[RMDB]
RNA sequence: GGGAACGACUCGAGUAGAGUCGAAAAUAAAAGGUGUUCAUCUGAGACCUGGUGCAGUGGCUCACGCUUGUGAUCCCAGCACUUUGGGAGGCCAAGGCGGGCAGAUCACCUAAGGUCAGGAGUUUGAGACCAGCCUGGCCAACAUGGCAAAACCCCAGUACCUGGAUUUAUUCGUAAAUCCAGGUACAAAAGAAACAACAACAACAAC
Reactivity to 2A3 in 0.01 (KOAc 150mM, MgCl2 10mM, bicine 150mM(pH8.5), 24C), signal-to-noise 2, nucleotides 027 to 156: u130a030a040a060a000g060g000u030g040u070u160c020a080u010c050u070g120a100g080a210c030c050u040g050g000u050g010c080a130g060u070g250g000c010u060c010a010c020g230c120u170u190g030u070g020a020u000c010c000c000a040g050c050a030c000u190u080u010g010g000g000a020g040g020c000c000a040a020g050g020c000g000g010g020c010a020g000a070u070c010a070c040c010u060a070a050g060g000u050c010a000g000g030a040g000u000u210u240g070a060g020a040c010c010a010g010c010c020u030g010g020c030c010a050a040c000a090u090g030g030c000a070a110a040a120c010c000c000c020a000